The record gives the reactivity of an RNA of 207 nucleotides to 2A3.
The 2A3 profile rests on 1,012 reads.
The RNA was probed in 150 mM KOAc, 10 mM MgCl2 and 150 mM bicine (pH 8.5) at 24 C.
Source: RMDB library OK3TST, as collected in RNAgym.
Values cover nucleotides 27 to 156.
[RMDB]
RNA sequence: GGGAACGACUCGAGUAGAGUCGAAAAUAUCGUCGUGCGUUCGGCAACGAGGCCAGCUACGCUGGUGGCAACUUGCGAGGCGUCGAUGCCGACGCGACCAAGGCCGCACGCGAGCAGCUGACCACCGUGGUACAGCGGAUCAAUCCGUCGUGGUGGCUGUCCCAAUUACGUUCGCGUAAUUGGGACAAAAAGAAACAACAACAACAAC
Reactivity to 2A3 in 0.01 (KOAc 150mM, MgCl2 10mM, bicine 150mM(pH8.5), 24C), signal-to-noise 2, nucleotides 027 to 156: u190a100u130c180g120u010c030g020u040g060c100g080u140u020c000g000g000c000a010a010c000g000a000g030g000c030c000a030g040c080u100a040c090g000c030u080g080g050u050g100g000c040a040a050c040u070u060g000c010g070a100g040g020c060g150u000c000g030a040u040g030c020c000g010a000c000g000c000g010a000c020c020a030a060g030g040c030c010g000c030a000c030g000c000g030a040g000c010a010g040c010u030g040a000c020c000a080c020c160g190u300g100g000u160a240c050a000g010c010g000g000a070u170c080a050a090u020c060c000g010u040c000g000u130g030g070u020g000g000c020